[RMDB]
RNA sequence: GGGAACGACUCGAGUAGAGUCGAAAAAAUGGCGCCAGUCGCCGAAACAAGAUUUGCCCGGUCUCGGUCAGCAGUGCAUGCGACCAAUCGAUCGAGGCGCGAAGUGUCUGCUGGCGCUGCACCGCGCCGGUCCGUUUGCUUUCGAGCAAACGGACCGAAAAGAAACAACAACAACAAC
Reactivity to DMS in 0.01 (KOAc 150mM, MgCl2 10mM, bicine 150mM(pH8.5), 24C), signal-to-noise 3, nucleotides 027 to 126: a060a070u010g000g030c000g030c010c040a010g030u020c180g030c070c030g000a080a070a080c130a100a150g000a100u010u020u000g020c010c000c010g010g020u000c010u010c170g020g010u000c000a040g050c010a020g000u000g000c270a090u000g020c030g020a060c000c020a020a080u010c200g000a040u000c020g010a120g030g020c010g020c050g010a100a080g020u020g010u000c040u000g020c010u000g000g010c010g010c010u010g020c190a110c070c020g010c180g010c100
Reactivity to 2A3 in 0.01 (KOAc 150mM, MgCl2 10mM, bicine 150mM(pH8.5), 24C), signal-to-noise 2, nucleotides 027 to 126: a000a000u240g000g000c010g000c000c010a000g050u130c020g030c030c010g000a060a040a000c100a060a080g020a180u110u070u240g020c030c020c010g050g000u000c050u000c070g010g050u030c040a120g000c000a000g060u070g300c140a070u020g000c000g030a020c000c020a000a030u190c080g030a010u010c020g030a200g020g000c000g000c000g060a090a000g030u030g010u150c030u010g040c010u010g010g000c010g000c000u020g000c020a040c000c000g070c040g020c050
Source information
This 177-nucleotide RNA was probed chemically with DMS and 2A3. Source: RMDB library OK2TRN, as collected in RNAgym. DMS adducts were read by reverse transcription with MarathonRT. Conditions: 150 mM KOAc, 10 mM MgCl2 and 150 mM bicine (pH 8.5), 24 C.